[RMDB]
RNA sequence: GGGAACGACUCGAGUAGAGUCGAAAAUGUUUUUGAAUAGUCAUAUUCUGACAUGAAGGAGUGUGUGUUUUGCCUCAUCUCAGAUCUUCUGGGAUGAGACUUUCUUAGAGUCUUUGUCACUGUCUCCUGGCCAUAUCUUAUUCGUAAGAUAUGGCCAAAAAGAAACAACAACAACAAC
Reactivity to 2A3 in 0.01 (KOAc 150mM, MgCl2 10mM, bicine 150mM(pH8.5), 24C), signal-to-noise 1, nucleotides 027 to 126: u010g010u000u040u080u110u080g030a050a020u080a020g080u110c120a070u020a060u070u000c010u010g000a000c010a010u070g020a050a020g030g010a070g010u070g000u010g010u020g050u120u080u190u170g010c000c000u000c000a010u000c000u010c000a040g010a130u100c100u300u060c020u150g070g000g000a000u020g010a000g000a000c000u090u080u020c070u060u170a030g030a070g130u000c090u000u120u070g180u060c020a010c020u030g070u100c000u030c050c010
Reactivity to DMS in 0.01 (KOAc 150mM, MgCl2 10mM, bicine 150mM(pH8.5), 24C), signal-to-noise 3, nucleotides 027 to 126: u000g000u000u000u000u020u000g010a030a020u000a040g010u020c300a090u000a040u000u010c020u010g000a030c020a020u000g010a140a100g010g010a040g010u010g010u020g010u000g000u000u000u000u000g010c030c010u000c000a000u000c000u010c000a000g010a120u010c260u010u010c000u000g010g000g000a010u000g000a010g010a010c010u000u000u000c040u010u000a120g010a080g010u010c050u000u000u000g010u000c040a070c060u000g010u000c030u010c030c140
The data come from the RNA Mapping Database (RMDB), library OK2TST.
Structure probing data (2A3 and DMS) for a 177-nucleotide construct.
For DMS the reverse transcriptase was MarathonRT.
For DMS, 4,550 sequencing reads were counted.
Conditions: 150 mM KOAc, 10 mM MgCl2 and 150 mM bicine (pH 8.5), 24 C.